Chemical mapping of a 177-nucleotide RNA with 2A3. For 2A3 the reverse transcriptase was SuperScript II with manganese.
RNA sequence: GGGAACGACUCGAGUAGAGUCGAAAAGAAAGAAAGAAGUGUGGCCGAGGGUGUGUCUUUUUCCGCUUUGCUGCCGCUGAAAUGGAGUCCGCCAGCAAAGGGGAACAGGCCGACCCUCCCGCACCAACCUCAUCGGUCUUUUCGAAGACCGAUGAGGAAAAGAAACAACAACAACAAC
Reactivity to 2A3 in 0.01 (KOAc 150mM, MgCl2 10mM, bicine 150mM(pH8.5), 24C), signal-to-noise 2, nucleotides 027 to 126: g110a000a000a010g110a010a190a020g110a030a020g010u010g000u000g020g040c180c080g030a000g000g000g000u080g030u010g010u030c000u000u060u010u000u010c040c040g160c140u030u010u020g000c010u000g080c090c070g030c060u080g030a050a140a200u270g000g040a050g200u020c020c010g000c000c000a000g000c000a010a000a000g090g000g010g000a010a000c000a000g010g000c030c030g040a060c010c020c000u000c010c000c000g000c000a000c010c000a000a070

The 2A3 profile rests on 1,201 reads. The data come from the RNA Mapping Database (RMDB), library RFM100.